[RMDB]
RNA sequence: GGGAACGACUCGAGUAGAGUCGAAAAGAUAUGGAAUUCCCAGCUUUUGACGCUGGACGCUCGGAAACGAGCGGCCCAGCGAUAAGCUGGAAUUCCUAAGUCAAACCGAGAGGUUCGCCUCUCGGAACUUUACGACCAUGUUCGCAUGGUCGUAAAGAAAAGAAACAACAACAACAAC
Reactivity to DMS in 0.01 (KOAc 150mM, MgCl2 10mM, bicine 150mM(pH8.5), 24C), signal-to-noise 2, nucleotides 027 to 126: g000a020u020a250u000g000g000a000a000u000u000c250c040c060a010g020c000u000u000u000u000g010a200c110g010c000u010g010g010a060c030g020c030u000c000g020g000a070a070a100c010g000a020g040c010g010g010c300c000c010a020g000c000g040a050u010a010a040g020c000u010g000g000a020a030u000u000c000c000u010a000a070g010u010c020a140a150a280c010c000g000a020g020a010g010g020u000u020c300g010c010c000u010c000u000c000g000g000a010a030
Reactivity to 2A3 in 0.01 (KOAc 150mM, MgCl2 10mM, bicine 150mM(pH8.5), 24C), signal-to-noise 1, nucleotides 027 to 126: g000a030u040a050u100g000g020a000a020u040u080c100c100c020a000g000c020u210u200u150u260g240a130c270g030c020u010g000g030a000c030g010c010u000c000g040g090a030a080a080c000g000a010g080c020g010g010c010c000c020a000g080c000g020a010u040a000a000g010c000u000g030g030a010a000u000u000c000c000u010a080a010g050u010c000a060a050a170c000c020g000a000g000a010g120g030u160u120c300g070c100c010u000c040u000c000g020g000a000a010